[RMDB]
RNA sequence: GGGAACGACUCGAGUAGAGUCGAAAAAGUUUCCAAUUCGUUGGAAACUACUGUCGGAAUGCGGAAUAUAAUAUCCUCCGCUUAAGGAUUUUACCGACUUAAAGUACACUAGUUUCGACUAGUGUAAUUAUUGGCGAAUAUUCGUAUUCGCCAAUAAAAAAGAAACAACAACAACAAC
Reactivity to DMS in 0.01 (KOAc 150mM, MgCl2 10mM, bicine 150mM(pH8.5), 24C), signal-to-noise 3, nucleotides 027 to 126: a240g010u000u000u000c000c000a010a020u000u000c160g000u000u000g000g000a010a000a000c000u000a050c060u010g010u000c000g000g000a140a080u010g000c010g010g000a030a030u010a090u010a100a120u000a190u000c260c090u000c010c010g020c010u000u000a050a090g010g000a160u010u000u000u010a120c000c000g000a010c010u010u010a030a060a140g010u000a000c000a000c000u000a000g000u000u000u010c240g010a020c010u000a000g020u000g000u000a010a020
Reactivity to 2A3 in 0.01 (KOAc 150mM, MgCl2 10mM, bicine 150mM(pH8.5), 24C), signal-to-noise 2, nucleotides 027 to 126: a000g000u000u000u010c000c000a000a010u080u090c160g030u010u010g000g030a010a000a000c010u010a050c050u040g000u010c010g010g000a060a020u070g000c000g050g100a100a010u130a020u060a240a090u090a110u170c010c010u000c010c010g030c000u000u080a030a020g080g040a030u000u090u090u300a070c000c000g030a020c050u030u180a100a030a030g050u010a000c000a000c000u010a020g000u000u060u100c140g050a020c000u010a000g010u010g000u010a000a000